[RMDB]
RNA sequence: GGGAACGACUCGAGUAGAGUCGAAAAAAAGGCACUAUCGGCGCAAUCCGGCGUGUGGUGGAGCCGCUCGGCUAUCUCAUCAACGUGACGGAGUGGUGGGAAAACAGUGACCCGCCCGGCACCUUCCGGCUCGAUAUUGGUGUACUGGAAAGUGGCAGACCUUAUGUACGUUCGCGUACAUAAGGUCAAAAGAAACAACAACAACAAC
Reactivity to 2A3 in 0.01 (KOAc 150mM, MgCl2 10mM, bicine 150mM(pH8.5), 24C), signal-to-noise 2, nucleotides 027 to 156: a000a000a000g070g010c050a030c020u010a020u030c040g040g000c050g020c000a040a120u030c010c010g020g000c000g010u220g040u070g040g010u030g010g000a010g000c030c040g110c200u180c210g000g000c030u060a060u090c140u090c050a030u030c000a010a010c000g000u050g150a060c010g050g000a050g010u020g020g050u030g000g060g000a040a110a020a020c060a090g040u050g110a120c010c000c010g060c000c010c000g000g000c020a130c000c000u090u060c010c040g040g000c030u030c060g040a030u040a090u140u100g030g000u060g020u040a100c020u020g020g030a110a060a010g040u030g100g000c000a000
Description
An RNA of 207 nucleotides, treated with 2A3 and read out base by base. The reactions ran in a buffer of 150 mM KOAc, 10 mM MgCl2 and 150 mM bicine (pH 8.5), at 24 C. The 2A3 profile rests on 990 reads. The data come from the RNA Mapping Database (RMDB), library OK3TST. 2A3 adducts were read by reverse transcription with SuperScript II with manganese. Values cover nucleotides 27 to 156.